[RMDB]
RNA sequence: GGGAACGACUCGAGUAGAGUCGAAAACUUGUGGUGCUCGCAAUUUCACCAAACCAGAAUCCUGUCGAACCACACCCUGUCAUAAUGGUGGUCGCUGUGUGGACACCAGAUUUGGUCCUCACUGCUCUACUUGCCCAAUCUUCGGAUUGGGCAAGUAAAAAGAAACAACAACAACAAC
Reactivity to DMS in 0.01 (KOAc 150mM, MgCl2 10mM, bicine 150mM(pH8.5), 24C), signal-to-noise 2, nucleotides 027 to 126: c090u000u000g000u000g020g000u000g040c110u000c030g000c080a050a060u000u010u000c080a090c040c090a020a070a220c180c100a080g010a090a100u000c100c050u010g010u000c020g000a100a080c030c030a050c010a070c020c020c050u010g000u040c090a060u000a080a090u010g030g000u000g000g010u000c110g000c130u000g000u000g010u000g010g010a090c050a090c050c080a040g000a080u000u000u000g040g000u000c010c010u000c010a040c030u000g000c050u020c060
Reactivity to 2A3 in 0.01 (KOAc 150mM, MgCl2 10mM, bicine 150mM(pH8.5), 24C), signal-to-noise 1, nucleotides 027 to 126: c000u000u060g000u000g050g000u110g040c000u050c050g000c040a060a180u000u090u190c050a080c060c000a130a030a030c040c020a050g030a030a090u020c010c010u090g090u150c050g030a080a050c010c000a010c010a010c030c000c000u030g050u110c040a090u140a300a090u130g060g000u010g030g010u080c050g000c040u010g000u030g020u070g030g010a030c030a030c100c020a030g070a260u210u240u300g010g000u000c000c000u000c030a020c020u000g010c000u010c000

Structure probing data (DMS and 2A3) for a 177-nucleotide construct. The reactions ran in a buffer of 150 mM KOAc, 10 mM MgCl2 and 150 mM bicine (pH 8.5), at 24 C. It was measured as part of the RMDB library OK2TST. For 2A3, 752 sequencing reads were counted.